Source: RMDB library OK2TRN, as collected in RNAgym.
The record gives the reactivity of an RNA of 177 nucleotides to 2A3 and DMS.
The reactions ran in a buffer of 150 mM KOAc, 10 mM MgCl2 and 150 mM bicine (pH 8.5), at 24 C.
RNA sequence: GGGAACGACUCGAGUAGAGUCGAAAAGUGAUACCAUGUUUUGUUAGGGCAAACAUCCUUUGGGUUAAAAGUAAGAAAUCUUAGGUAGCAGAGAUUUUACUUUUGCUUCCAGCAAACAUAGGAAGGGCACAAACCUCUAAUUCGUUAGAGGUUUGUGAAAAGAAACAACAACAACAAC
Reactivity to 2A3 in 0.01 (KOAc 150mM, MgCl2 10mM, bicine 150mM(pH8.5), 24C), signal-to-noise 1, nucleotides 027 to 126: g080u040g050a040u070a180c010c000a000u020g100u000u140u040u050g050u030u050a070g020g000g000c060a080a110a080c040a110u060c020c020u110u080u170g080g000g010u040u070a080a060a000a030g000u010a020a030g010a100a030a010u000c000u020u050a090g130g030u080a040g080c070a030g010a010g000a060u000u030u000u000a010c010u040u040u010u030g010c000u150u030c010c020a020g000c010a030a040a000c000a020u010a050g050g020a000a050g040g070g000
Reactivity to DMS in 0.01 (KOAc 150mM, MgCl2 10mM, bicine 150mM(pH8.5), 24C), signal-to-noise 4, nucleotides 027 to 126: g020u020g010a150u000a130c030c010a050u000g000u000u000u010u000g020u000u000a130g000g000g000c030a050a070a140c250a040u000c010c020u010u010u010g020g010g020u000u000a060a080a030a020g010u000a020a030g000a030a050a120u000c000u000u010a100g010g020u010a060g020c110a110g010a040g010a240u000u000u000u000a010c010u000u000u010u000g000c030u010u000c020c030a070g010c030a010a020a010c030a020u000a090g020g000a060a090g000g010g000